Overview
This 177-nucleotide RNA was probed chemically with DMS. In probing experiments dimethyl sulfate is read out at A N1 and C N3, which are open when not base-paired. The DMS profile rests on 997 reads. Conditions: 150 mM KOAc, 10 mM MgCl2 and 150 mM bicine (pH 8.5), 24 C.
RNA sequence: GGGAACGACUCGAGUAGAGUCGAAAAGCUAUACCGUUCGCGGUAUAGCAAAAUCUUUCCGAGAUGUACUAAUACGAGCCUAUUAGUCAUCGGUUCGAGUCCAAACGGGUUACUUCGGUAACCCGAACUGAUUUCACUGGUUCGCCAGUGAAAUCAGAAAAGAAACAACAACAACAAC
Reactivity to DMS in 0.01 (KOAc 150mM, MgCl2 10mM, bicine 150mM(pH8.5), 24C), signal-to-noise 1, nucleotides 027 to 126: g020c000u000a010u000a000c000c000g020u010u010c240g010c010g030g000u000a010u000a000g000c000a020a030a050a110u010c120u000u010u000c000c000g020a120g000a070u000g010u010a000c000u000a000a010u000a010c090g020a150g030c260c190u000a020u000u000a010g000u000c010a030u000c010g000g020u000u010c070g010a020g000u000c010c040a070a090a270c020g000g000g010u000u000a000c000u000u000c170g030g000u000a000a000c000c000c000g000a000a020